[RMDB]
RNA sequence: GGGAACGACUCGAGUAGAGUCGAAAAGAUAUGGAUGUCUUGGACCUCGUGUUACGAAGAACUCGGAAACGAGGGAGUAAGACGAGCUAGACAUCCUAAGUCAAACCCAAGCGUUCGCGCUUGGGAACACGUUUGUACUCUUCGGAGUACAAACGUGAAAAGAAACAACAACAACAAC
Reactivity to DMS in 0.01 (KOAc 150mM, MgCl2 10mM, bicine 150mM(pH8.5), 24C), signal-to-noise 1, nucleotides 027 to 126: g010a010u030a300u000g000g000a000u040g000u000c000u010u000g090g010a120c300c000u000c000g000u000g000u000u000a000c000g000a030a080g010a090a140c010u000c000g000g000a170a100a110c020g010a010g000g070g010a120g020u000a020a000g000a000c020g000a000g030c010u000a000g000a000c000a010u000c000c000u000a000a090g010u020c020a060a110a220c010c000c000a010a000g010c000g050u000u000c180g010c000g000c030u010u000g000g000g020a090a130
Reactivity to 2A3 in 0.01 (KOAc 150mM, MgCl2 10mM, bicine 150mM(pH8.5), 24C), signal-to-noise 1, nucleotides 027 to 126: g040a000u100a030u130g000g000a000u010g000u000c010u040u230g070g160a200c020c020u000c020g000u250g070u000u020a030c070g110a300a160g020a130a040c010u000c000g000g000a070a110a050c000g000a020g060g070g000a010g000u010a010a020g110a000c000g000a000g060c020u020a000g000a000c000a030u000c000c000u020a090a030g010u010c000a060a030a300c000c000c010a010a000g000c030g010u030u210c300g040c010g000c090u000u000g000g000g000a000a000